[RMDB]
RNA sequence: GGGAACGACUCGAGUAGAGUCGAAAAAGGAGGAGAGCCCUCCCUCUCCGUGGGGAAACGGGAGCGUAGGGAAGACCGGCAUGAGCAAGACAUCCGCGGAGGAGAACACCUGCUCGAGGCUCCUCCGCCCAAGGAGCUCAUUCGUGAGCUCCUUGGGAAAAGAAACAACAACAACAAC
Reactivity to DMS in 0.01 (KOAc 150mM, MgCl2 10mM, bicine 150mM(pH8.5), 24C), signal-to-noise 2, nucleotides 027 to 126: a090g010g010a020g010g020a040g000a160g000c030c020c020u010c020c100c020u000c010u000c020c030g000u010g000g000g000g010a070a100a060c130g030g030g010a060g010c110g030u020a070g010g010g010a050a080g020a210c070c000g000g000c070a040u000g030a100g000c040a080a070g030a110c170a110u000c040c040g020c140g020g010a170g000g000a010g010a060a150c130a140c060c070u010g000c030u010c030g010a070g010g000c010u010c000c010u000c010c030g000
Reactivity to 2A3 in 0.01 (KOAc 150mM, MgCl2 10mM, bicine 150mM(pH8.5), 24C), signal-to-noise 2, nucleotides 027 to 126: a000g010g010a000g000g020a060g000a060g170c000c000c000u020c010c000c000u000c000u000c010c030g020u050g010g180g010g040a120a190a030c040g020g000g000a050g050c090g050u060a030g050g030g030a090a030g050a080c010c000g040g030c000a060u210g030a010g020c020a030a020g030a060c040a080u040c030c040g050c130g080g120a030g020g010a030g000a030a040c040a080c030c020u040g000c040u040c060g090a050g010g000c000u000c000c000u000c000c010g000
The record gives the reactivity of an RNA of 177 nucleotides to DMS and 2A3. DMS adducts were read by reverse transcription with MarathonRT. Conditions: 150 mM KOAc, 10 mM MgCl2 and 150 mM bicine (pH 8.5), 24 C. The data come from the RNA Mapping Database (RMDB), library OK2TST. For DMS, 1,611 sequencing reads were counted. The 2A3 profile rests on 1,589 reads. Reactivities are given for positions 27 through 126.